Chemical mapping of a 177-nucleotide RNA with DMS and 2A3. The data come from the RNA Mapping Database (RMDB), libraries RFM100 and RFMREP. For 2A3 the reverse transcriptase was SuperScript II with manganese.

[RMDB]
RNA sequence: GGGAACGACUCGAGUAGAGUCGAAAACAUGGAGCCAUUGAUCCAAGGAUUUCCGAAUGGGACUUCCUGUUUAACACUCCGAAAGGAGAGGGAACCCCGGGAAUUGAAACAUCUUAGUACCGGGAGGGACAUCUCAGUAUUUCGAUACUGAGAUGUCAAAAGAAACAACAACAACAAC
Reactivity to DMS in 0.01 (KOAc 150mM, MgCl2 10mM, bicine 150mM(pH8.5), 24C), signal-to-noise 9, nucleotides 027 to 126: c040a070u020g010g010a050g010c030c040a070u010u020g000a090u010c050c060a100a100g010g000a080u010u000u010c060c050g020a100a060u020g010g010g010a060c060u000u010c000c000u000g000u000u010u010a100a140c130a150c010u010c000c000g000a110a120a160g000g000a030g000a090g000g000g010a130a160c090c000c010c000g000g000g010a110a140u010u010g000a090a140a140c190a090u010c030u000u000a040g000u000a120c010c000g000g010g000a070g010g000
Reactivity to 2A3 in 0.01 (KOAc 150mM, MgCl2 10mM, bicine 150mM(pH8.5), 24C), signal-to-noise 9, nucleotides 027 to 126: c020a060u100g020g000a000g030c030c020a060u030u080g060a040u050c040c040a080a110g100g000a060u080u060u090c080c040g090a100a090u100g030g020g040a050c020u040u020c000c010u010g030u020u060u030a090a030c050a020c020u000c010c000g030a040a030a010g020g010a020g010a060g020g050g030a050a060c000c010c000c000g000g010g010a020a020u030u040g060a130a120a040c070a160u080c010u030u030a000g010u000a000c000c000g000g010g010a090g060g070